[RMDB]
RNA sequence: GGGAACGACUCGAGUAGAGUCGAAAAGAGAUAUUUUUGUGAUGACACAUCAGUGGAUUCAUCAAUUAUCAAGCAGAACUUUUUGUUCUGGAGAUCUUCAAUCAAUUCACUUUUUAUGGCUGGGGCAAAACAGUCAUUGCUUCGGCAAUGACUGUUUAAAAGAAACAACAACAACAAC
Reactivity to 2A3 in 0.01 (KOAc 150mM, MgCl2 10mM, bicine 150mM(pH8.5), 24C), signal-to-noise 3, nucleotides 027 to 126: g070a000g000a030u080a070u070u070u050u050u040g100u030g020a060u100g020a020c000a000c010a090u270c130a090g010u050g050g060a100u060u000c000a060u030c010a020a050u090u020a020u050c020a040a020g070c000a010g040a010a070c030u070u230u210u300u300g020u020u020c000u010g000g000a110g000a030u030c020u150u060c060a040a120u050c000a050a120u260u030c010a100c000u090u170u050u150u170a040u220g040g000c000u020g010g020g030g030c010a000
Reactivity to DMS in 0.01 (KOAc 150mM, MgCl2 10mM, bicine 150mM(pH8.5), 24C), signal-to-noise 1, nucleotides 027 to 126: g040a070g020a010u000a000u000u000u010u010u000g060u000g000a030u000g000a300c030a000c000a070u040c300a090g030u000g010g000a300u000u000c100a010u040c300a000a030u020u000a020u020c020a120a160g040c040a080g010a000a010c010u000u050u000u050u040g010u000u010c000u000g000g000a070g000a040u020c000u000u010c050a160a050u000c130a080a060u000u000c050a020c130u010u020u020u030u070a060u010g020g000c000u000g000g000g020g000c120a070